[RMDB]
RNA sequence: GGGAACGACUCGAGUAGAGUCGAAAAACAUAGGUGGUUUAUUGAUUAGUGAGGUCCUCAUACCAUCUAGACAGAAGAGGACACAAGGCAGGGUCGCUACCUUUAGAAUGGGAAGAAGGAUAUUUCACUCGUGAUUACGAUUCGUCGUAAUCACGAGAAAAGAAACAACAACAACAAC
Reactivity to DMS in 0.01 (KOAc 150mM, MgCl2 10mM, bicine 150mM(pH8.5), 24C), signal-to-noise 2, nucleotides 027 to 126: a120c190a110u000a030g000g000u030g020g000u000u020u020a140u070u040g000a040u010u000a080g030u030g020a120g020g010u000c000c000u000c050a080u020a190c070c050a010u000c020u000a000g020a120c170a090g000a110a060g050a000g000g000a030c020a040c060a060a040g000g050c060a130g020g000g000u000c060g000c020u000a090c060c030u000u030u020a040g000a050a110u050g000g000g000a130a080g000a050a100g000g010a090u010a020u010u000u000c010a210
Reactivity to 2A3 in 0.01 (KOAc 150mM, MgCl2 10mM, bicine 150mM(pH8.5), 24C), signal-to-noise 4, nucleotides 027 to 126: a010c020a040u090a020g080g010u050g030g160u030u090u150a160u260u270g170a100u050u090a020g060u090g280a070g120g000u040c010c010u010c010a050u080a080c020c000a010u000c020u050a010g060a040c090a040g100a080a000g000a050g000g040a000c010a010c030a090a020g140g000c080a020g010g030g030u000c000g020c050u100a070c000c020u100u080u050a090g050a200a040u200g070g000g000a000a060g050a050a000g120g070a010u040a100u140u070u040c050a080